An RNA of 207 nucleotides, treated with 2A3 and read out base by base.
The RNA was probed in 150 mM KOAc, 10 mM MgCl2 and 150 mM bicine (pH 8.5) at 24 C.
[RMDB]
RNA sequence: GGGAACGACUCGAGUAGAGUCGAAAACGGCUUCGACGGGGAUGUAUAAGCUCUACGUUGCAUGUCGAGCAACUGCCAGCUCGUAAAAAAGGCGGAAACUAAUAUAAUCGCAGACGAUUAUAACUACGCAGUAGCAGCUUAAUAACUGUCAUACUGCCUCUGUUUAGCUCUUCGGAGCUAAACAGAGAAAAGAAACAACAACAACAAC
Reactivity to 2A3 in 0.01 (KOAc 150mM, MgCl2 10mM, bicine 150mM(pH8.5), 24C), signal-to-noise 3, nucleotides 027 to 156: c000g000g000c030u050u040c040g070a090c080g040g000g000g010a030u030g080u100a120u040a200a050g010c000u000c010u030a030c020g080u040u030g010c060a050u100g100u130c020g010a000g000c010a030a130c010u010g000c000c000a030g000c010u000c000g090u120a020a020a020a020a020a010g000g000c010g040g010a130a020a010c050u040a020a280u060a040u000a070a000u010c010g000c160a060g130a300c070g010a020u000u010a030u000a090a000c070u150a020c050g000c010a000g000u000a000g000c000a000g000c000u050u040a040a010u050a090a040c000u000g020u040c000a080u010a020c010u000g010c000